[RMDB]
RNA sequence: GGGAACGACUCGAGUAGAGUCGAAAAGACGCAUGUAAUAGUCUGUGUCCUCAGGCUCAACCUCUACCCUCCUCGAUAUCCAAUGAAAGAAACGCAAGAUCUGGUAGUAAAUGGCUCGCAAAGCACCGCUAUUACCUGCCUUCGGGCAGGUAAUAGCAAAAGAAACAACAACAACAAC
Reactivity to DMS in 0.01 (KOAc 150mM, MgCl2 10mM, bicine 150mM(pH8.5), 24C), signal-to-noise 2, nucleotides 027 to 126: g010a110c050g000c120a050u010g000u020a040a140u060a080g020u000c010u010g020u050g000u000c000c000u050c100a050g040g000c000u010c060a170a030c110c000u000c000u000a090c020c030c010u000c000c000u010c030g000a210u030a010u000c070c080a060a070u000g000a120a070a140g020a000a000a150c160g010c080a100a110g030a040u120c080u000g070g060u010a090g000u000a020a060a050u050g010g000c020u000c070g000c110a000a090a110g020c040a060c050c090
Reactivity to 2A3 in 0.01 (KOAc 150mM, MgCl2 10mM, bicine 150mM(pH8.5), 24C), signal-to-noise 2, nucleotides 027 to 126: g100a010c010g070c100a110u120g060u270a080a090u050a110g060u000c010u030g030u020g070u050c000c020u000c000a000g000g040c030u020c080a030a030c030c000u040c030u040a060c000c000c020u030c030c000u050c000g040a020u050a030u020c000c040a060a040u130g090a080a120a070g060a020a150a000c030g040c040a070a020g010a040u030c010u050g100g000u000a010g040u060a030a150a130u080g040g010c000u040c040g020c060a050a070a000g030c000a030c020c050
An RNA of 177 nucleotides, treated with DMS and 2A3 and read out base by base. The RNA was probed in 150 mM KOAc, 10 mM MgCl2 and 150 mM bicine (pH 8.5) at 24 C. 2A3 adducts were read by reverse transcription with SuperScript II with manganese.